[RMDB]
RNA sequence: GGGAACGACUCGAGUAGAGUCGAAAACGGAUGCCACGACAUCUGACCUAUCGGCAGCGAGUGGCCCGCGUGGAUCAGGUGAUCCAGGAGCUUUCGCUCAGCAAAUGUCAGCACACGAUCAUCGGUGCAACUCGGACGUCUUCGGACGUCCGAGUUGAAAAGAAACAACAACAACAAC
Reactivity to DMS in 0.01 (KOAc 150mM, MgCl2 10mM, bicine 150mM(pH8.5), 24C), signal-to-noise 1, nucleotides 027 to 126: c030g010g000a090u000g020c020c020a110c120g010a130c140a080u010c010u000g010a170c000c060u000a110u000c160g000g000c150a030g040c080g010a080g050u000g000g010c010c000c010g020c090g020u000g000g010a030u000c010a270g000g000u010g000a000u010c010c020a070g050g000a070g010c000u000u000u000c030g010c000u000c070a160g000c100a040a090a030u000g010u000c130a130g020c130a000c080a090c070g010a120u000c160a080u000c050g000g040u010g000
Reactivity to 2A3 in 0.01 (KOAc 150mM, MgCl2 10mM, bicine 150mM(pH8.5), 24C), signal-to-noise 1, nucleotides 027 to 126: c010g040g040a010u090g030c080c110a140c080g110a080c020a000u050c000u080g120a230c000c010u150a200u170c070g020g000c040a020g010c050g050a030g050u100g000g000c060c000c000g190c040g100u060g000g030a090u030c020a080g300g160u270g030a020u090c000c000a000g040g000a030g000c000u100u050u000c040g010c010u030c050a030g000c040a030a080a090u150g080u180c110a030g020c000a010c000a010c050g020a090u070c030a010u130c000g050g020u000g000